An RNA of 177 nucleotides, treated with 2A3 and DMS and read out base by base.

[RMDB]
RNA sequence: GGGAACGACUCGAGUAGAGUCGAAAAUGAAUCAAGACGCUGUCCAAAGAAUGCGUGCUAAUCAUGAAGGUAUUGAUCGUACUGCCAAAGAGCUUCCAUUCUUUGCUGCUGGUAUCAGUAUGGUUAACGAUUAGGUCCUAUUCGUAGGACCUAAUCGAAAAGAAACAACAACAACAAC
Reactivity to 2A3 in 0.01 (KOAc 150mM, MgCl2 10mM, bicine 150mM(pH8.5), 24C), signal-to-noise 4, nucleotides 027 to 126: u050g050a000a040u140c060a020a030g030a030c020g000c050u060g050u060c040c080a120a050a010g090a080a060u080g000c040g080u040g080c020u060a050a060u050c020a070u110g070a060a050g090g040u110a030u110u090g080a050u040c000g020u030a020c010u010g030c030c010a060a030a010g070a010g000c040u170u020c070c000a160u100u030c010u070u130u090g010c010u070g100c000u040g000g020u060a050u120c000a000g030u060a030u060g040g020u080u050a080a060
Reactivity to DMS in 0.01 (KOAc 150mM, MgCl2 10mM, bicine 150mM(pH8.5), 24C), signal-to-noise 5, nucleotides 027 to 126: u000g030a090a040u000c120a080a090g000a090c040g010c020u000g000u000c150c140a090a080a100g000a070a070u010g010c070g000u010g010c020u000a140a100u000c050a060u010g010a090a130g010g020u000a090u000u000g000a040u000c090g040u000a030c020u000g010c190c030a100a110a050g000a040g000c070u000u000c130c090a100u000u010c080u010u000u000g020c070u000g000c030u000g020g010u020a050u010c040a020g000u010a030u000g010g000u000u010a050a120

The RNA was probed in 150 mM KOAc, 10 mM MgCl2 and 150 mM bicine (pH 8.5) at 24 C. The 2A3 profile rests on 3,325 reads.